The record gives the reactivity of an RNA of 177 nucleotides to 2A3. For 2A3, 320 sequencing reads were counted.

RNA sequence: GGGAACGACUCGAGUAGAGUCGAAAAUCUUGGGAGCAGCAGGAAGCACUAUGGGCGCAGCGUCAUUGACGCUGACGGUACAGGCCAGACUAUUAUUGUCUGGUAUAGUGCAACAGCAGAACAAUUUAUGCGAUCGUAAGUUCGCUUACGAUCGCAUAAAAGAAACAACAACAACAAC
Reactivity to 2A3 in 0.01 (KOAc 150mM, MgCl2 10mM, bicine 150mM(pH8.5), 24C), signal-to-noise 1, nucleotides 027 to 126: u000c010u010u030g070g070g040a020g010c060a000g030c000a000g290g120a180a000g000c000a000c050u050a000u050g070g160g070c090g000c000a000g000c000g020u010c160a300u050u250g000a000c000g000c000u000g050a110c000g060g000u180a000c090a070g060g060c000c000a000g000a000c010u080a110u300u050a030u000u300g000u000c000u000g000g000u000a030u000a000g000u000g000c010a050a050c000a000g160c000a000g000a070a000c140a110a110u000u050u010

Conditions: 150 mM KOAc, 10 mM MgCl2 and 150 mM bicine (pH 8.5), 24 C.